The record gives the reactivity of an RNA of 177 nucleotides to 2A3. Conditions: 150 mM KOAc, 10 mM MgCl2 and 150 mM bicine (pH 8.5), 24 C.

[RMDB]
RNA sequence: GGGAACGACUCGAGUAGAGUCGAAAAGUCAUCGCGGUGGUGGUCCUUGGUUGGUAUUUCCUGCGGAUACCCAGCCUGGUCGGCAUCGGUCGAUACACGCUUUAUGCCGAAUUGCCUCGGUCCGGGGUGGACGCAGCAGGUUCGCCUGCUGCGUCCAAAAAGAAACAACAACAACAAC
Reactivity to 2A3 in 0.01 (KOAc 150mM, MgCl2 10mM, bicine 150mM(pH8.5), 24C), signal-to-noise 1, nucleotides 027 to 126: g100u110c020a000u000c000g000c000g000g040u040g100g040u100g000g080u150c000c000u070u180g070g000u070u080g030g120u000a030u000u040u000c070c070u020g000c000g070g000a040u080a020c020c000c000a000g010c000c000u000g000g000u000c000g030g020c000a020u020c020g050g040u030c000g030a000u060a080c070a010c070g010c030u110u100u010a210u080g000c000c000g060a130a030u070u110g000c000c030u130c000g050g010u050c030c120g040g010g000g000